[RMDB]
The record gives the reactivity of an RNA of 177 nucleotides to 2A3 and DMS. The RNA was probed in 150 mM KOAc, 10 mM MgCl2 and 150 mM bicine (pH 8.5) at 24 C.
RNA sequence: GGGAACGACUCGAGUAGAGUCGAAAAUAUCGCUCAUAUCAAGUAAUGGAUGGAAUAAUACUAACUCCGGACGAUUUCCAGAAAUAGUCAAUGCAUAAACACCUAGCAUAUGAGUCAAAUCGUCAAAGUGCGGUAUUAUGUUCGCAUAAUACUGCGCAAAAGAAACAACAACAACAAC
Reactivity to 2A3 in 0.01 (KOAc 150mM, MgCl2 10mM, bicine 150mM(pH8.5), 24C), signal-to-noise 9, nucleotides 027 to 126: u100a020u040c040g000c010u010c010a030u030a020u060c060a090a050g090u110a210a070u130g040g040a040u040g020g060a100a030u140a130a050u100a090c020u020a080a040c030u000c030c020g040g010a020c050g110a100u110u090u020c020c010a020g050a030a070a030u040a010g040u040c060a030a060u060g030c030a050u100a120a150a020c040a020c040c030u020a020g010c030a010u040a030u050g010a000g010u020c020a010a040a100u090c060g090u040c040a090a040a040
Reactivity to DMS in 0.01 (KOAc 150mM, MgCl2 10mM, bicine 150mM(pH8.5), 24C), signal-to-noise 9, nucleotides 027 to 126: u010a080u010c210g010c020u000c020a030u000a030u000c050a120a110g010u010a100a100u000g000g010a120u000g010g010a090a060u010a090a080u010a060c070u010a060a110c150u000c020c050g010g020a050c270g010a080u000u000u000c030c040a070g010a070a090a150u000a030g010u000c110a060a060u010g010c080a060u010a060a070a100c110a060c090c040u000a110g020c100a020u000a030u000g000a030g010u000c120a040a050a060u000c080g010u000c070a050a070a110
DMS adducts were read by reverse transcription with MarathonRT. The 2A3 profile rests on 47,227 reads.